[RMDB]
RNA sequence: GGGAACGACUCGAGUAGAGUCGAAAAGAGAGAAAUACCGCGCGAAAGCAGAGAAAGGACUGUAAGGACGCGAAAUCCUUUCCGUCACUUACCGCAAGAAAGAGCGAUGUGUGACGAAUAGAGAGAGGCGUAGCAGUCCAUUCGUGGACUGCUACGCAAAAGAAACAACAACAACAAC
Reactivity to DMS in 0.01 (KOAc 150mM, MgCl2 10mM, bicine 150mM(pH8.5), 24C), signal-to-noise 1, nucleotides 027 to 126: g000a190g020a190g010a050a000a110u060a070c220c080g020c160g000c120g060a140a230a150g060c010a040g000a110g050a050a050a100g000g070a040c000u000g000u000a100a070g060g000a000c040g000c040g050a130a130a080u000c020c000u000u000u000c110c000g000u000c020a000c000u000u000a110c070c040g050c040a120a020g000a010a160a170g000a160g000c000g000a160u000g010u000g040u020g000a000c000g040a240a060u000a000g000a100g000a240g000a120g000
Reactivity to 2A3 in 0.01 (KOAc 150mM, MgCl2 10mM, bicine 150mM(pH8.5), 24C), signal-to-noise 1, nucleotides 027 to 126: g090a000g000a000g010a000a060a010u190a060c040c050g040c020g000c070g190a170a080a000g050c020a000g000a000g000a000a110a000g000g020a000c000u000g000u000a090a010g240g000a020c000g100c070g130a000a000a020u050c000c000u020u000u000c000c000g000u030c060a000c000u040u180a200c000c000g020c000a000a020g070a300a180a000g200a070g020c000g000a000u000g070u000g000u000g070a010c020g040a110a010u100a020g110a000g030a000g000a020g010
The record gives the reactivity of an RNA of 177 nucleotides to DMS and 2A3. Source: RMDB library OK1LIB, as collected in RNAgym. For 2A3 the reverse transcriptase was SuperScript II with manganese. For DMS the reverse transcriptase was MarathonRT.